[RMDB]
Record summary
This 207-nucleotide RNA was probed chemically with DMS and 2A3. Values cover nucleotides 27 to 156. The reactions ran in a buffer of 150 mM KOAc, 10 mM MgCl2 and 150 mM bicine (pH 8.5), at 24 C.

RNA sequence: GGGAACGACUCGAGUAGAGUCGAAAAGGGGUCAGUCUUGGAUUUACACACUCUUGGGGCCAGGCUGAUGACCCGAGUGCACAUACUGAAGCCUCCACGGUAUGUGCACUCGGCAAGGCCUGAUCUCAAGUGUGUUGUCAGACUGACGGAGGCACCCGAUUAUGGGAAAGUUCGCUUUCCCAUAAUCAAAAGAAACAACAACAACAAC
Reactivity to DMS in 0.01 (KOAc 150mM, MgCl2 10mM, bicine 150mM(pH8.5), 24C), signal-to-noise 2, nucleotides 027 to 156: g000g020g030g020u000c000a030g000u010c000u000u040g060g000a130u020u010u010a070c050a070c000a020c020u010c030u010u000g000g030g010g030c040c010a020g000g010c010u020g020a120u010g000a130c300c010c000g020a040g020u000g000c010a020c000a020u000a020c000u000g010a070a110g020c120c010u000c020c020a300c020g030g000u000a000u000g030u000g000c000a000c000u000c000g020g020c050a110a160g020g010c030c010u000g000a010u000c010u000c000a010a020g000u000g020u000g030u000u000g000u000c040a070g010a050c000u000g010a040c030g010g020a030g030g030c000a160c010c010c000
Reactivity to 2A3 in 0.01 (KOAc 150mM, MgCl2 10mM, bicine 150mM(pH8.5), 24C), signal-to-noise 5, nucleotides 027 to 156: g120g010g030g010u020c010a000g000u010c030u130u260g140g030a110u170u240u300a030c020a000c020a000c010u100c070u080u050g000g000g010g070c120c010a010g000g000c010u040g020a190u230g050a100c040c010c000g000a000g000u010g010c000a000c000a000u000a000c000u020g030a090a030g020c000c010u000c010c010a020c010g000g000u010a000u010g000u000g000c000a000c000u000c000g000g020c010a020a020g010g000c000c000u040g050a130u090c000u000c000a000a010g000u000g000u000g000u010u010g000u020c000a000g000a000c000u010g000a000c000g000g000a000g010g000c010a030c010c010c010